[RMDB]
RNA sequence: GGGAACGACUCGAGUAGAGUCGAAAAAACUCAGCUAGGGAGAGUAUAACAUUCAUGUUGACGAGACCUAGACGAAACACAGAGGAAAAUUAUUAAUCACUGGAUAGGAUUAGUAAUGACUCUGUGUAAAACUCUUCUACGUUCGCGUAGAAGAGAACAGUCUAGAUUAGUUCGCUAAUCUAGACUGAAAAGAAACAACAACAACAAC
Reactivity to DMS in 0.01 (KOAc 150mM, MgCl2 10mM, bicine 150mM(pH8.5), 24C), signal-to-noise 2, nucleotides 027 to 156: a080a020c060u000c020a130g020c000u000a010g030g000g000a170g010a220g010u000a070u000a030a070c040a070u000u000c150a090u010g020u000u000g020a150c020g010a250g020a080c000c030u000a060g000a240c130g020a200a130a040c000a000c020a000g010a010g000g010a040a170a070a050u000u000a000u000u000a020a000u000c010a080c060u010g050g000a250u010a140g000g010a030u000u000a020g050u000a010a010u000g000a160c000u000c000u010g000u010g020u000a000a000a070a100c010u000c010u000u010c000u000a000c000g030u000u000c300g030c040g060u000a010g010a030a010g000a000g000a010a080
Reactivity to 2A3 in 0.01 (KOAc 150mM, MgCl2 10mM, bicine 150mM(pH8.5), 24C), signal-to-noise 4, nucleotides 027 to 156: a000a000c020u020c000a020g000c000u010a000g020g040g010a040g020a030g040u090a130u090a300a010c050a060u140u180c050a060u270g020u050u050g040a030c030g000a010g050a060c000c000u010a010g010a040c020g000a010a040a000c000a000c000a000g000a020g000g060a090a140a120a000u010u000a000u010u000a000a010u010c010a060c300u140g090g110a170u270a230g010g010a000u010u000a010g010u000a010a010u020g000a010c000u000c000u010g010u000g000u000a000a010a000a000c000u000c000u000u000c000u000a000c000g030u010u040c210g000c010g110u010a000g000a000a000g000a000g000a000a020
The record gives the reactivity of an RNA of 207 nucleotides to DMS and 2A3. 2A3 is a SHAPE reagent: it acylates the 2'-hydroxyl of flexible nucleotides of all four kinds. The reactions ran in a buffer of 150 mM KOAc, 10 mM MgCl2 and 150 mM bicine (pH 8.5), at 24 C. For DMS the reverse transcriptase was MarathonRT.